The data come from the RNA Mapping Database (RMDB), library M2RFPK.
Structure probing data (DMS and 2A3) for a 207-nucleotide construct.
The RNA was probed in 150 mM KOAc, 10 mM MgCl2 and 150 mM bicine (pH 8.5) at 24 C.
The 2A3 profile rests on 3,757 reads.

[RMDB]
RNA sequence: GGGAACGACUCGAGUAGAGUCGAAAAGCUUAAUAACCUGCGCUGAGCCCUUCUCCCCCAGCUUGCCUGUGUCCUAGGGAAUUGGAAGGUCAUCCUUCACAGGAUCCUGUGGAAGUCCUGCUCGGGGUCCAAACAUGGUAAUUCGUUACCAUGUUAAGUACGUAUCGUAUUUCGAUACGAUACGUACAAAAGAAACAACAACAACAAC
Reactivity to DMS in 0.01 (KOAc 150mM, MgCl2 10mM, bicine 150mM(pH8.5), 24C), signal-to-noise 2, nucleotides 027 to 156: g000c040u000u000a080a170u000a070a130c060c020u010g020c070g040c040u010g010a090g000c020c010c060u020u000c040u000c020c010c010c020c030a080g000c020u000u010g010c060c020u020g000u010g020u000c050c050u010a180g000g030g020a060a170u000u000g020g010a090a040g010g030u010c090a140u000c010c020u000u000c020a070c000a090g030g000a110u000c020c000u010g020u000g020g040a070a140g000u000c030c030u000g010c000u000c050g020g030g010g030u000c040c040a100a020a020c000a010u010g000g020u000a010a070u000u010c300g020u000u010a000c000c000a000u010g000u000u010a040a150
Reactivity to 2A3 in 0.01 (KOAc 150mM, MgCl2 10mM, bicine 150mM(pH8.5), 24C), signal-to-noise 4, nucleotides 027 to 156: g010c020u120u100a120a030u090a160a280c030c070u100g040c080g010c060u030g050a060g020c020c030c000u070u040c130u080c020c000c000c000c000a000g000c000u020u050g010c000c020u080g010u030g050u110c000c010u000a030g000g010g030a030a070u050u020g010g000a010a000g010g020u110c030a160u260c010c000u030u040c060a080c000a190g010g040a090u090c000c000u050g000u010g010g010a000a020g010u020c000c010u000g010c010u000c030g000g020g010g000u040c030c040a070a010a000c000a000u000g000g000u000a010a020u040u050c120g040u050u000a000c010c010a010u000g000u000u010a050a010